[RMDB]
This 207-nucleotide RNA was probed chemically with DMS and 2A3.
For DMS the reverse transcriptase was MarathonRT.
For 2A3, 18,121 sequencing reads were counted.
The DMS profile rests on 4,294 reads.
The reactions ran in a buffer of 150 mM KOAc, 10 mM MgCl2 and 150 mM bicine (pH 8.5), at 24 C.

RNA sequence: GGGAACGACUCGAGUAGAGUCGAAAAAGGCACUUCGCAAUGUGUGCUCAAACAUUGCUUAUUCAAACACGCUUCACAAUGAGCGACAAAGAAACAUUGUUAUAAGAGCUAAUGUUUUAACAUUGGCAAAACCGAGUUAGCUUCGGCUAACUCGGAACCCUAACUAUUCCUUCGGGAAUAGUUAGGGAAAAGAAACAACAACAACAAC
Reactivity to DMS in 0.01 (KOAc 150mM, MgCl2 10mM, bicine 150mM(pH8.5), 24C), signal-to-noise 3, nucleotides 027 to 156: a100g020g000c070a060c080u000u000c130g010c020a060a020u000g060u000g060u010g020c010u010c100a130a060a090c020a020u000u010g020c020u010u000a080u000u000c090a120a150a140c060a110c040g000c050u000u000c090a130c070a090a150u000g000a050g050c010g010a300c080a060a100a080g000a150a130a070c050a110u000u000g020u000u000a110u000a050a120g000a230g010c020u010a010a020u010g020u000u000u000u000a120a070c000a020u000u000g020g000c010a010a030a070a110c000c000g000a040g020u000u000a000g000c030u000u010c300g060g010c010u000a010a000c000u000c000g000g000a000a010
Reactivity to 2A3 in 0.01 (KOAc 150mM, MgCl2 10mM, bicine 150mM(pH8.5), 24C), signal-to-noise 9, nucleotides 027 to 156: a000g170g000c000a010c010u010u020c020g000c000a000a010u010g000u000g000u010g010c100u100c210a040a050a000c000a000u010u010g000c020u100u150a210u160u190c130a050a070a030c080a010c060g010c000u030u020c030a010c010a030a020u020g000a000g020c020g070a080c110a040a120a020g090a040a090a010c010a020u010u020g030u080u120a170u070a210a110g040a020g030c000u000a000a000u010g030u020u160u050u180a100a030c000a000u000u000g000g000c000a040a060a010a020c000c000g000a000g000u000u000a000g000c000u020u020c160g050g000c000u000a000a000c000u000c000g000g000a000a000